[RMDB]
RNA sequence: GGGAACGACUCGAGUAGAGUCGAAAAAGGGGUAUGUAGCAGGUAGGUGGUGGAGCAGCCAAUGGUUUGGAAGCGAGUGGGUCACCAAAAACUCCUUCCUCAUCUCUACAUGUGGUACACAGACAGCCCCUUACUGCAGUUUCGACUGCAGUAAGGGAAAAGAAACAACAACAACAAC
Reactivity to DMS in 0.01 (KOAc 150mM, MgCl2 10mM, bicine 150mM(pH8.5), 24C), signal-to-noise 2, nucleotides 027 to 126: a050g030g000g010g000u000a100u020g000u000a100g010c060a030g030g020u000a060g010g030u000g010g010u000g010g010a120g020c110a140g000c080c050a100a040u000g000g030u000u000u010g010g020a000a030g000c120g010a030g030u000g000g030g010u010c210a070c030c080a040a050a030a110a060c060u000c010c000u000u000c000c000u010c080a040u000c000u000c040u000a020c080a010u010g010u010g000g000u000a040c180a060c070a080g000a040c090a090g020c040
Reactivity to 2A3 in 0.01 (KOAc 150mM, MgCl2 10mM, bicine 150mM(pH8.5), 24C), signal-to-noise 1, nucleotides 027 to 126: a030g030g020g020g000u110a040u150g020u050a040g020c080a020g090g010u080a010g040g030u050g030g020u010g000g060a050g000c040a000g000c000c000a120a100u070g070g070u050u090u050g030g060a000a020g010c080g110a020g020u050g010g010g070u120c060a090c150c000a200a060a060a000a040c010u040c000c000u020u020c010c000u000c000a040u000c030u010c000u000a050c000a060u090g000u060g030g000u090a050c020a010c060a030g030a110c010a010g070c000
This 177-nucleotide RNA was probed chemically with DMS and 2A3. For DMS, 1,273 sequencing reads were counted. DMS (dimethyl sulfate) methylates the pairing face of unpaired adenines and cytosines. 2A3 is a SHAPE reagent: it acylates the 2'-hydroxyl of flexible nucleotides of all four kinds. It was measured as part of the RMDB library OK2TRN. 2A3 adducts were read by reverse transcription with SuperScript II with manganese.